[RMDB]
RNA sequence: GGGAACGACUCGAGUAGAGUCGAAAAGAUAUGGAUCAUACAGGCUUUUGACGUCGAUAUACUCGGAAACGAGUAUGAUCGACGAUAAGCCUGGUGAUCCUAAGUCAAAGAGCAGUUCGCUGCUCAACAGACGAUACAUGUUCGCAUGUAUCGUCUGAAAAGAAACAACAACAACAAC
Reactivity to 2A3 in 0.01 (KOAc 150mM, MgCl2 10mM, bicine 150mM(pH8.5), 24C), signal-to-noise 4, nucleotides 027 to 126: g020a000u060a040u160g010g000a010u010c020a030u300a300c000a080g030g000c020u120u100u210u300g300a200c130g000u000c010g020a000u000a000u000a030c010u000c000g020g060a080a080a060c010g020a010g000u010a000u010g030a020u000c000g000a000c000g000a000u010a000a000g000c000c010u000g000g010u010g000a000u000c000c000u010a090a030g000u000c060a210a040a070g010a010g000c010a000g000u100u230c300g030c120u010g000c010u000c000a010a010
Reactivity to DMS in 0.01 (KOAc 150mM, MgCl2 10mM, bicine 150mM(pH8.5), 24C), signal-to-noise 3, nucleotides 027 to 126: g000a040u010a300u000g000g010a030u000c000a000u000a160c000a000g010g010c010u000u000u020u000g020a260c050g030u000c000g010a010u000a040u010a020c000u010c010g010g000a130a090a180c010g000a010g010u000a000u000g000a020u010c000g000a020c000g020a030u000a020a030g000c000c000u000g010g020u000g000a000u000c010c000u010a020a070g010u010c020a090a160a160g000a010g010c000a010g020u000u040c300g030c000u000g000c010u000c000a080a170